[RMDB]
RNA sequence: GGGAACGACUCGAGUAGAGUCGAAAAAAAGUUAAAUUUGUGUUAUGGACACUAACAUCAUUGCUGAAUAAUGAGACAUGGAAAGGGGAUUUUCAUUAAGUUGUGCCUUUGUGGAGCUUAGGCAAUUUGCAACGUUUGCAUCAUUACCCAAGUAAUAAGUAAGGGUGAAGUUCGCUUCACCCUUACUAAAAGAAACAACAACAACAAC
Reactivity to DMS in 0.01 (KOAc 150mM, MgCl2 10mM, bicine 150mM(pH8.5), 24C), signal-to-noise 2, nucleotides 027 to 156: a070a010a060g020u010u010a050a110a140u020u010u000g070u000g050u000u000a100u000g030g000a090c020a060c090u010a060a070c030a080u000c100a030u000u010g000c050u010g000a180a090u030a050a070u000g010a100g000a070c100a070u000g040g000a050a080a080g040g000g010g030a150u000u000u000u000c050a120u000u000a050a130g010u010u010g020u000g000c030c000u000u010u020g030u030g040g000a250g010c050u000u000a010g020g020c010a040a070u000u000u000g020c010a060a080c260g030u000u000u020g040c000a050u000c080a060u000u010a030c000c030c000a020a150g030u010a040a110u020a110
Reactivity to 2A3 in 0.01 (KOAc 150mM, MgCl2 10mM, bicine 150mM(pH8.5), 24C), signal-to-noise 2, nucleotides 027 to 156: a000a000a000g090u110u030a070a060a130u110u040u060g030u000g040u030u080a160u180g070g040a020c000a000c090u060a060a000c040a090u150c050a060u030u110g040c040u030g080a140a100u070a040a040u130g020a010g020a040c040a050u020g010g030a050a040a040g010g030g000g020a020u000u060u080u060c050a020u100u080a060a000g000u020u010g090u070g000c020c000u020u040u000g060u040g060g070a080g010c010u000u010a010g000g020c020a030a080u090u040u140g000c000a010a010c110g070u090u100u030g010c030a020u050c000a040u040u070a040c000c000c000a010a080g030u110a090a060u110a220
This 207-nucleotide RNA was probed chemically with DMS and 2A3. Reactivities are given for positions 27 through 156. In probing experiments dimethyl sulfate is read out at A N1 and C N3, which are open when not base-paired. Source: RMDB library OK3TST, as collected in RNAgym. Conditions: 150 mM KOAc, 10 mM MgCl2 and 150 mM bicine (pH 8.5), 24 C. Reactivities are rounded to 0.1 and cut off at 0 and 3.